[RMDB]
This 207-nucleotide RNA was probed chemically with 2A3 and DMS. The data come from the RNA Mapping Database (RMDB), library PDB130. DMS adducts were read by reverse transcription with MarathonRT. 2A3 adducts were read by reverse transcription with SuperScript II with manganese. Values cover nucleotides 27 to 156. For 2A3, 1,044 sequencing reads were counted.
RNA sequence: GGGAACGACUCGAGUAGAGUCGAAAAAUUGUUUUCCGAGAGGGGAUGGAUGCUGCGGUCGGACCCGAAAGAUGGUGAGCUAUGUGUGUGUUGAUUGAAGGGAUGCGAAAGUGUUCUGGAGGAUCUAAGCCGUUCUGACGUGCAACUCGAUGGCAUGGCUUUGGAAUAAGUUCGCUUAUUCCAAAGCAAAAGAAACAACAACAACAAC
Reactivity to 2A3 in 0.01 (KOAc 150mM, MgCl2 10mM, bicine 150mM(pH8.5), 24C), signal-to-noise 2, nucleotides 027 to 156: a000u120u050g030u030u030u050u020c050c040g060a050g000a020g090g080g040g000a050u050g030g040a040u030g040c010u040g030c060g040g010u020c020g020g050a040c010c000c000g090a130a090a000g080a030u090g010g030u060g010a040g000c020u050a070u100g030u000g030u000g030u010g030u070u030g060a130u010u070g040a070a050g040g000g010a000u050g010c000g050a080a030a030g030u030g010u120u010c010u050g050g000a040g010g010a010u050c050u080a000a120g040c000c010g030u050u000c020u040g020a050c020g010u070g000c020a070a110c010u010c090g100a090u060g020g040c050a040u010g000
Reactivity to DMS in 0.01 (KOAc 150mM, MgCl2 10mM, bicine 150mM(pH8.5), 24C), signal-to-noise 1, nucleotides 027 to 156: a070u000u000g000u000u000u010u000c020c030g030a200g020a090g020g020g030g020a080u000g000g020a070u000g040c040u000g020c060g000g040u000c040g070g020a100c040c010c030g030a130a050a120g000a070u000g020g010u000g010a110g010c020u000a040u010g020u000g050u000g000u000g050u000u000g000a080u000u000g000a170a190g040g000g010a080u000g000c000g000a050a030a150g040u010g010u000u010c020u010g020g010a140g000g040a030u010c030u000a050a140g000c020c040g020u000u000c040u000g000a100c040g000u010g050c000a050a070c030u000c100g000a060u010g000g010c000a080u040g020